[RMDB]
RNA sequence: GGGAACGACUCGAGUAGAGUCGAAAAUUUGCCCCCAUGCCCGCUGGCAUCACUGAUUCCAGGUUAUUUUGGCUCAGCGCGGAUGGAGCGAGAUGUAGGGGAAAGGUUGGGACCGGCUUCCAGGUGAGGUAUGGGUAGCAUUCGUGCUACCCAUACCAAAAGAAACAACAACAACAAC
Reactivity to DMS in 0.01 (KOAc 150mM, MgCl2 10mM, bicine 150mM(pH8.5), 24C), signal-to-noise 1, nucleotides 027 to 126: u000u000u000g000c070c000c030c010c080a040u000g010c010c010c030g020c020u020g020g000c050a030u000c050a170c060u020g010a140u000u000c040c060a050g000g020u030u010a080u000u000u000u000g000g020c300u000c030a030g000c070g020c300g030g010a110u020g020g020a110g000c000g010a010g000a070u000g000u030a080g000g000g000g000a070a090a020g000g010u000u000g000g030g000a070c010c030g020g030c070u000u000c030c010a160g000g000u000g000a190

The record gives the reactivity of an RNA of 177 nucleotides to DMS. Reactivities are given for positions 27 through 126. For DMS the reverse transcriptase was MarathonRT. The reactions ran in a buffer of 150 mM KOAc, 10 mM MgCl2 and 150 mM bicine (pH 8.5), at 24 C.